[RMDB]
RNA sequence: GGGAACGACUCGAGUAGAGUCGAAAAGAUAUGGAAUGCUCUUAAAGACGAUGAAAGUAUGUCGGAAACGACAUACUGGAGUCUUUAAGAGGCAUUCCUAAGUCAAAGUACGCCUUCGGGCGUACAAUCGUAAGAAACCGUUCGCGGUUUCUUACGAAAAAGAAACAACAACAACAAC
Reactivity to DMS in 0.01 (KOAc 150mM, MgCl2 10mM, bicine 150mM(pH8.5), 24C), signal-to-noise 1, nucleotides 027 to 126: g000a060u010a300u000g000g000a000a040u000g000c000u000c000u000u010a010a000a010g050a010c000g030a140u070g000a130a120a030g000u000a000u000g000u000c000g000g030a080a070a240c000g010a030c000a010u000a000c000u000g000g020a070g000u000c000u000u000u000a000a010g000a020g000g020c000a010u020u000c000c000u000a010a030g010u000c070a040a170a230g000u000a000c010g000c000c000u000u020c210g050g020g000c010g000u030a000c000a110a090